[RMDB]
RNA sequence: GGGAACGACUCGAGUAGAGUCGAAAAACCUUAUUUUGAGGAGCUGAGGGAUUUGGCCCAUAGAAGCUUCAGCAACCGACUUUAAAUAGCACGGUGCUAAUACCAACGAGCAACUCGAAUGAUAAGUAAAACGUUGACAAGUUCGCUUGUCAACGAAGAUAUGCUUGGUCUUCGGACCAAGCAUAUCAAAAGAAACAACAACAACAAC
Reactivity to 2A3 in 0.01 (KOAc 150mM, MgCl2 10mM, bicine 150mM(pH8.5), 24C), signal-to-noise 2, nucleotides 027 to 156: a000c090c000u200u060a140u070u090u050u050g080a040g010g000a020g000c000u020g020a010g000g000g010a010u000u000u020g050g000c000c000c000a000u090a170g030a020a000g020c000u070u070c010a000g000c000a000a000c000c010g020a030c000u020u070u240a160a240a260u140a170g010c010a030c030g000g010u000g000c010u000a010a050u060a180c030c000a000a080c050g040a030g050c040a080a100c060u060c050g060a050a070u060g030a060u060a120a040g040u100a070a190a020a000c000g000u000u000g000a000c010a000a000g000u010u060c190g160c160u030u000g010u030c000a010a000c000g000a000a010